[RMDB]
Conditions: 150 mM KOAc, 10 mM MgCl2 and 150 mM bicine (pH 8.5), 24 C. This 207-nucleotide RNA was probed chemically with 2A3 and DMS. For DMS, 9,624 sequencing reads were counted.
RNA sequence: GGGAACGACUCGAGUAGAGUCGAAAAAGUCAUACCAUUACGAUGGUAUGGCAAGUCCGUGACGGCGAUGGAUCCCGCCUGGCCGAUGCCGAACUGCCGAUCUGGCUGAUGGUUCCUGCCCCGUCAAAAAACGUAAAGCACUUCGGUGCUUUACGAAGAAUAUAACUGACUUCGGUCAGUUAUAUUCAAAAGAAACAACAACAACAAC
Reactivity to 2A3 in 0.01 (KOAc 150mM, MgCl2 10mM, bicine 150mM(pH8.5), 24C), signal-to-noise 8, nucleotides 027 to 156: a000g000u000c000a000u000a000c000c000a000u050u050a050c290g090a020u010g000g000u000a000u000g000g000c000a010a020g060u010c010c010g030u040g000a010c010g000g060c100g030a020u070g000g010a010u040c020c010c010g010c010c030u030g010g000c010c020g050a050u120g080c040c060g150a210a120c110u130g030c020c020g040a080u040c050u090g010g010c020u050g050a140u130g020g000u020u020c010c000u050g030c010c010c000c010g000u010c030a050a030a020a030a040a030c010g000u000a000a000a000g000c000a000c010u030u110c210g080g000u000g000c000u000u000u000a000c000g000a010a010
Reactivity to DMS in 0.01 (KOAc 150mM, MgCl2 10mM, bicine 150mM(pH8.5), 24C), signal-to-noise 3, nucleotides 027 to 156: a130g010u000c010a010u000a010c000c000a040u000u000a160c290g030a170u000g010g020u000a000u000g000g020c010a040a040g020u000c010c010g040u010g010a040c020g020g020c050g040a170u000g000g000a030u000c050c010c080g020c020c020u000g010g000c010c020g010a100u000g030c050c020g000a090a080c060u010g010c040c010g020a090u000c020u020g030g040c000u000g020a160u000g010g010u000u000c020c030u000g020c070c090c010c010g010u010c030a000a040a050a060a070a160c010g020u000a010a010a030g000c010a010c000u000u000c300g040g010u000g020c000u000u000u000a010c000g010a040a060